About this RNA: Conditions: 150 mM KOAc, 10 mM MgCl2 and 150 mM bicine (pH 8.5), 24 C. This 177-nucleotide RNA was probed chemically with 2A3. For 2A3 the reverse transcriptase was SuperScript II with manganese. The data come from the RNA Mapping Database (RMDB), library OK1LIB.
RNA sequence: GGGAACGACUCGAGUAGAGUCGAAAAUCGCCCACAUCUACGGGCACGGCAACGCCAAACGCUGGGGGUGGAUCCACGCCGACCUCGGUCACGGUGACGUGCUGGAGGUCGUCACCGCGGUGUCGCACGAGCCACUGACGUUCGCGUCAGUGGCUCGAAAAGAAACAACAACAACAAC
Reactivity to 2A3 in 0.01 (KOAc 150mM, MgCl2 10mM, bicine 150mM(pH8.5), 24C), signal-to-noise 1, nucleotides 027 to 126: u110c070g010c000c000c010a050c040a020u000c000u060a060c030g000g000g030c020a010c070g100g000c010a040a030c030g000c020c060a100a030a000c120g000c030u040g010g000g010g000g060u150g060g030a030u060c050c000a040c090g080c020c030g000a010c000c020u000c000g000g000u160c020a000c060g030g000u020g000a080c000g000u000g080c000u080g140g070a020g030g020u000c000g000u000c010a020c030c010g000c010g000g010u020g000u020c060g000c040a100